Chemical mapping of a 207-nucleotide RNA with 2A3 and DMS.

RNA sequence: GGGAACGACUCGAGUAGAGUCGAAAAGAGGAGAUUUGUACUUGAGCUGAGCUUGGAAGGCCAGAAUUAUCUCUGAAUACUGGGUACAUCCCAGCCAGCAGGAUGGAACCUCACGGUCAGUUUCUACAAGGUCUCAGUGGUAGUAGGUGAACGUCCAUAGCAUAAUGCAGUUCGCUGCAUUAUGCUAAAAAGAAACAACAACAACAAC
Reactivity to 2A3 in 0.01 (KOAc 150mM, MgCl2 10mM, bicine 150mM(pH8.5), 24C), signal-to-noise 4, nucleotides 027 to 156: g100a030g060g030a050g000a060u060u080u110g090u100a100c070u090u100g030a010g020c010u000g010a010g010c010u030u040g040g040a060a040g050g060c010c010a020g060a100a080u220u120a090u060c090u000c030u100g070a070a010u080a090c010u010g010g000g050u180a100c060a120u130c010c010c010a000g010c020c020a020g010c040a020g000g060a020u040g000g040a020a030c020c010u060c010a030c030g010g050u050c020a040g010u010u070u040c030u080a120c040a100a020g030g040u020c030u000c080a040g010u050g050g010u030a080g000u010a040g040g000u040g030a060a000c020g040u010c030c020a040
Reactivity to DMS in 0.01 (KOAc 150mM, MgCl2 10mM, bicine 150mM(pH8.5), 24C), signal-to-noise 2, nucleotides 027 to 156: g020a170g020g020a160g050a050u000u000u000g020u000a060c080u000u000g030a100g030c010u010g020a100g000c060u000u000g040g020a160a120g000g020c010c030a090g030a100a130u010u000a090u000c060u000c030u000g020a160a070u000a080c020u000g010g020g070u000a090c100a220u000c010c000c000a090g020c060c070a090g000c020a110g020g000a070u000g010g010a120a080c000c020u000c090a100c100g000g020u000c020a030g010u000u010u000c010u020a090c040a030a060g030g010u020c030u000c040a000g060u000g040g010u000a050g000u000a030g040g010u000g000a070a090c070g010u010c000c030a260
For 2A3, 2,816 sequencing reads were counted.